[RMDB]
RNA sequence: GGGAACGACUCGAGUAGAGUCGAAAACUUCCCUGCUGAGGUUCUUCCCUCCGGCGGCCAGUUGCUUCUUCUUGUUCUCGAGGGCCUUCCUUCGUCGGUGAUCCCGCCUCUCCUCGUCGGUGAAACCCAACUUCAAAGAGUUCGCUCUUUGAAGUUGAAAAGAAACAACAACAACAAC
Reactivity to 2A3 in 0.01 (KOAc 150mM, MgCl2 10mM, bicine 150mM(pH8.5), 24C), signal-to-noise 1, nucleotides 027 to 126: c000u040u030c000c010c000u000g000c050u000g010a030g050g020u100u040c030u100u040c050c000c000u040c030c000g050g000c030g040g040c040c010a010g040u070u060g060c010u030u040c000u060u010c010u020u100g040u130u040c060u050c040g020a100g000g050g020c030c000u040u050c020c000u040u060c030g060u010c000g040g050u030g040a040u020c020c010c010g000c000c020u030c030u040c010c000u020c020g050u040c030g060g000u050g080a050a030a050c000c000
Reactivity to DMS in 0.01 (KOAc 150mM, MgCl2 10mM, bicine 150mM(pH8.5), 24C), signal-to-noise 3, nucleotides 027 to 126: c210u000u010c010c000c010u010g000c070u010g020a090g000g000u000u000c060u020u010c060c010c010u000c050c040g000g020c060g000g010c040c060a070g010u010u010g010c050u000u000c040u000u000c030u000u000g010u010u000c020u010c040g020a120g000g010g010c040c020u010u000c030c000u000u010c060g010u010c050g010g000u000g000a120u000c050c020c040g010c070c020u010c040u000c010c010u000c060g020u000c040g000g010u010g000a090a080a150c080c050